[RMDB]
RNA sequence: GGGAACGACUCGAGUAGAGUCGAAAAUUCUUGAGCCUUAAGCGUGUUCAUUCAAAAAUUGAAUGUGGUUCGGGAUGAAUUAUGAACUGCAGUUUGUUGGCUUACGCUAUUGUUCAUGACUAGAAAAACGUCGUAAUACGUUCGCGUAUUACGACGUAAAAGAAACAACAACAACAAC
Reactivity to DMS in 0.01 (KOAc 150mM, MgCl2 10mM, bicine 150mM(pH8.5), 24C), signal-to-noise 2, nucleotides 027 to 126: u000u000c010u000u000g010a030g000c010c040u000u000a110a060g020c060g030u000g000u010u010c030a010u000u000c050a040a040a050a090a170u010u000g020a050a070u010g000u010g020g040u000u000c010g010g000g020a130u000g000a110a120u030u070a050u020g000a000a040c040u000g030c030a030g020u000u010u000g020u000u000g010g000c120u000u010a030c100g050c000u020a060u000u000g010u030u000c010a030u020g000a120c150u010a120g000a030a060a050a060
Reactivity to 2A3 in 0.01 (KOAc 150mM, MgCl2 10mM, bicine 150mM(pH8.5), 24C), signal-to-noise 1, nucleotides 027 to 126: u020u000c000u000u010g020a000g060c000c000u050u100a130a010g010c020g030u050g020u000u110c040a060u010u080c030a060a060a060a030a110u090u130g120a080a220u090g010u010g090g000u000u030c030g020g010g110a060u160g110a040a160u300u060a090u190g010a010a000c030u040g010c000a060g000u020u070u010g080u090u070g060g020c000u020u080a000c000g030c000u050a030u030u100g010u020u010c000a010u050g010a000c010u110a140g300a070a030a040a010